This 207-nucleotide RNA was probed chemically with 2A3. The reactions ran in a buffer of 150 mM KOAc, 10 mM MgCl2 and 150 mM bicine (pH 8.5), at 24 C. The 2A3 profile rests on 1,092 reads. It was measured as part of the RMDB library RNAMAK.
RNA sequence: GGGAACGACUCGAGUAGAGUCGAAAACUAACGUUUCGACGUUAGAAAAAAGAUAUGGAUCACAUACAGCUUUUGACGCUCCCUGGGUCGGAAACGACCCUGGGAGCGAUAAGCUGUAUUUGAUCCUAAGUCAAAAACAUGAUGUUCGCAUCAUGAAGUUCUCACUAAGGUUCGCCUUAGUGAGAACAAAAGAAACAACAACAACAAC
Reactivity to 2A3 in 0.01 (KOAc 150mM, MgCl2 10mM, bicine 150mM(pH8.5), 24C), signal-to-noise 2, nucleotides 027 to 156: c010u000a000a000c000g020u040u120u150c230g090a010c000g000u020u040a000g130a110a100a030a010a000a000g040a010u040a040u090g000g000a000u000c010a000c000a000u000a000c000a000g010c000u010u130u090u110g300a100c050g020c010u000c020c000c020u030g020g000g030u000c050g040g010a050a030a100c020g000a000c020c020c000u020g000g020g020a010g000c000g000a010u000a010a000g000c000u020g000u000a010u000u000u000g000a000u000c000c000u000a010a000g020u010c020a000a000a000a110a130c000a010u010g000a000u030g030u110u140c300g020c130a000u000c000a000u040g050a050a010